[RMDB]
RNA sequence: GGGAACGACUCGAGUAGAGUCGAAAACGGCAUGAUACCACCGUUAUCGGGUCAACAGAGUAGUUGCAAAUGACAACAAUGCUCAGGGUUAUGCUCUCGCUGCCUAAUGGCGGUGCGGGAAACCUACAAAAGAUAUUGAUCUUCGGAUCAAUAUCAAUCGUCUAGAGGAGUUCGCUCCUCUAGACGAAAAAGAAACAACAACAACAAC
Reactivity to 2A3 in 0.01 (KOAc 150mM, MgCl2 10mM, bicine 150mM(pH8.5), 24C), signal-to-noise 3, nucleotides 027 to 156: c000g000g020c020a020u110g000a030u070a050c000c000a010c020c020g280u080u040a030u060c030g000g000g000u010c000a030a040c080a020g030a010g010u060a000g020u000u010g050c070a130a210a250u230g030a150c010a010a000c000a070a100u140g030c020u000c050a030g020g010g000u020u050a160u250g080c020u000c000u000c020g000c000u010g010c000c000u160a300a160u170g000g000c000g040g050u010g000c020g000g000g000a010a010a010c010c010u060a080c090a020a120a020a010g000a000u000a000u000u000g000a000u020c020u030u120c290g140g000a010u000c000a000a000u000a000u000c000a000a050